[RMDB]
RNA sequence: GGGAACGACUCGAGUAGAGUCGAAAAGAUAUGGACGAGUGAACUACUUCGAGUGGGACGUUUGACGUUCCAUGGAUCGGAAACGAUCCAUGGAACCGAGUCCCACGAGAAGCACUCGUCCUAAGUCCUAUUUAUAGUAGUUCGCUACUAUAAAUAGAAAAGAAACAACAACAACAAC
Reactivity to DMS in 0.01 (KOAc 150mM, MgCl2 10mM, bicine 150mM(pH8.5), 24C), signal-to-noise 6, nucleotides 027 to 126: g010a080u000a200u020g010g010a000c000g010a030g000u000g000a090a050c070u020a300c010u000u000c000g000a300g000u000g020g010g010a010c010g010u010u010u010g010a200c300g000u000u000c000c000a010u010g000g000a000u010c000g000g000a100a070a180c010g000a010u000c000c010a000u000g010g000a000a000c000c040g010a120g000u000c000c000c010a000c010g000a210g000a010a010g000c000a010c000u000c000g000u000c000c000u000a000a080g000u000c030
Reactivity to 2A3 in 0.01 (KOAc 150mM, MgCl2 10mM, bicine 150mM(pH8.5), 24C), signal-to-noise 4, nucleotides 027 to 126: g040a030u100a030u190g010g000a010c010g000a010g010u010g020a060a130c090u280a060c010u300u010c010g010a020g000u000g020g020g020a010c050g070u130u300u300g100a090c080g000u020u000c000c000a000u000g020g000a010u010c010g000g000a050a040a040c000g000a010u000c000c010a000u010g000g030a010a000c010c000g030a030g000u010c020c010c000a000c010g000a010g000a000a000g010c000a000c000u000c000g000u000c000c000u000a000a000g000u000c010